[RMDB]
Annotation:
Structure probing data (DMS and 2A3) for a 177-nucleotide construct. 2A3 is a SHAPE reagent: it acylates the 2'-hydroxyl of flexible nucleotides of all four kinds. The data come from the RNA Mapping Database (RMDB), library OK1LIB.
RNA sequence: GGGAACGACUCGAGUAGAGUCGAAAAUUGAGGCUGGUGGGUUGUAAAGGCGGGGGUUCCCAUCAAGUACGGGAGCGUGAAAACCUGGCUGUUUCCCACUCGAAAGAAUCCCAGGCCUGUUGGCCAAAACUCCCGGGUCAUUCGUGACUCGGGAGUUAAAAGAAACAACAACAACAAC
Reactivity to DMS in 0.01 (KOAc 150mM, MgCl2 10mM, bicine 150mM(pH8.5), 24C), signal-to-noise 2, nucleotides 027 to 126: u030u010g000a140g020g010c100u020g000g020u000g000g000g010u000u000g020u030a070a080a110g000g000c010g000g020g010g010g010u000u000c000c010c000a140u010c150a120a140g040u030a060c150g000g000g010a030g010c000g010u020g000a070a050a000a140c010c000u000g010g020c000u000g000u010u000u010c010c000c000a030c010u000c040g010a110a070a150g000a110a100u010c010c000c000a130g000g000c000c000u010g020u020u040g000g040c000c010a040a040
Reactivity to 2A3 in 0.01 (KOAc 150mM, MgCl2 10mM, bicine 150mM(pH8.5), 24C), signal-to-noise 2, nucleotides 027 to 126: u060u140g030a010g000g060c140u070g000g070u060g000g020g030u060u010g190u200a230a110a000g000g000c000g000g000g050g000g000u000u000c040c010c000a000u070c030a030a140g150u110a020c070g000g000g000a000g000c050g050u100g080a000a010a000a030c000c000u000g230g000c000u010g080u080u140u050c000c010c010a000c010u030c000g060a070a020a020g020a010a080u000c000c000c000a000g000g000c000c000u010g120u070u220g000g030c000c000a010a040